[RMDB]
RNA sequence: GGGAACGACUCGAGUAGAGUCGAAAAAUGACAUAAGGAGUUCAUUUCACACCAAACAUCUUUCCAGCAUGUUUCUCCCAUUGAGAAACAUCCUAGCAUUUAAGGCCUCUUAAUGUAAGAUAAGCCGUAUGUACGGUAGGUUCGCCUACCGUACAUAAAAAGAAACAACAACAACAAC
Reactivity to 2A3 in 0.01 (KOAc 150mM, MgCl2 10mM, bicine 150mM(pH8.5), 24C), signal-to-noise 4, nucleotides 027 to 126: a000u010g000a010c030a040u230a100a150g170g010a080g080u090u040c010a010u050u040u040c090a070c020a030c040c010a030a080a040c040a090u060c070u050u120u040c040c020a010g010c030a030u010g000u000u020u000c010u010c050c090c080a180u100u300g000a010g000a000a010a000c000a000u000c000c010u040a060g020c030a110u050u130u130a110a030g010g010c010c010u040c010u080u080a190a090u300g130u170a050a010g010a040u050a070a020g000c000c000g030
Reactivity to DMS in 0.01 (KOAc 150mM, MgCl2 10mM, bicine 150mM(pH8.5), 24C), signal-to-noise 6, nucleotides 027 to 126: a020u010g000a030c060a110u020a100a090g010g020a130g010u010u000c020a040u000u000u010c120a110c110a190c040c050a080a100a110c150a040u000c090u000u010u010c090c050a060g000c260a020u000g010u000u000u000c010u010c000c300c150a110u010u030g000a000g000a010a010a010c010a020u000c120c050u010a100g000c170a100u010u010u000a070a080g010g010c020c080u000c010u000u000a100a060u040g030u010a040a030g010a030u000a070a130g000c000c020g020